[RMDB]
RNA sequence: GGGAACGACUCGAGUAGAGUCGAAAAGUAUGCCGGCGAACAGCAGUGCGCGUCCACCGACUUCCAGCGCCCGCUGAGCCUUGAUGACGCGGCGGAUGUAGUCGGCGUCCGCUUCGCCGAGGUCAGCAGCAUUAAUGGCCUUCGGGCCAUUAAUGCUAAAAGAAACAACAACAACAAC
Reactivity to 2A3 in 0.01 (KOAc 150mM, MgCl2 10mM, bicine 150mM(pH8.5), 24C), signal-to-noise 1, nucleotides 027 to 126: g030u090a010u240g000c020c020g080g000c100g070a150a180c040a040g100c080a000g090u070g170c020g010c090g040u030c050c050a080c010c010g030a040c000u060u000c040c000a010g000c010g000c070c000c070g000c000u020g020a080g050c000c000u000u050g070a090u090g090a050c000g010c000g010g030c000g000g000a000u070g000u120a090g000u140c040g040g000c000g000u010c000c070g000c000u000u010c030g000c010c080g040a040g000g040u000c000a000g000c010